[RMDB]
RNA sequence: GGGAACGACUCGAGUAGAGUCGAAAAGCUCAGGGGUUCGCCCCUGAGCAAAAGAUACCGGUCUCGGUAUCAAAGUCAGUCCGACAGACCACAGGCAACUGAAAAGGGAGGGGUUCGCCCCUCCCAAGUUAACAAUUCAGUUCGCUGAAUUGUUAACAAAAGAAACAACAACAACAAC
Reactivity to DMS in 0.01 (KOAc 150mM, MgCl2 10mM, bicine 150mM(pH8.5), 24C), signal-to-noise 3, nucleotides 027 to 126: g000c010u010c000a000g010g000g010g020u000u010c260g000c040c010c000c000u000g000a000g010c000a010a010a060a100g010a010u000a000c000c000g010g010u010c280u000c020g030g000u010a010u000c010a060a070a100g010u000c050a040g010u000c060c030g000a110c060a090g000a180c020c040a070c090a130g000g000c070a070a050c040u000g000a060a060a120a180g000g010g000a020g010g020g010g010u000u020c180g010c000c000c000c010u000c010c000c000a010a010
Reactivity to 2A3 in 0.01 (KOAc 150mM, MgCl2 10mM, bicine 150mM(pH8.5), 24C), signal-to-noise 2, nucleotides 027 to 126: g000c000u000c030a000g040g030g030g050u060u060c110g060c020c010c040c010u010g000a000g000c000a000a010a000a000g000a000u010a010c010c000g060g140u160c290u190c260g020g020u000a010u010c010a000a000a010g080u040c030a000g060u070c010c010g020a020c030a030g040a030c010c010a010c030a040g010g000c020a050a040c060u040g020a040a040a070a140g000g000g000a000g020g030g000g000u020u060c110g050c000c000c000c000u020c000c000c000a000a000

The record gives the reactivity of an RNA of 177 nucleotides to DMS and 2A3. 2A3 is a SHAPE reagent: it acylates the 2'-hydroxyl of flexible nucleotides of all four kinds. High DMS reactivity at an A or C suggests that its Watson-Crick edge is free. The reactions ran in a buffer of 150 mM KOAc, 10 mM MgCl2 and 150 mM bicine (pH 8.5), at 24 C. For DMS the reverse transcriptase was MarathonRT.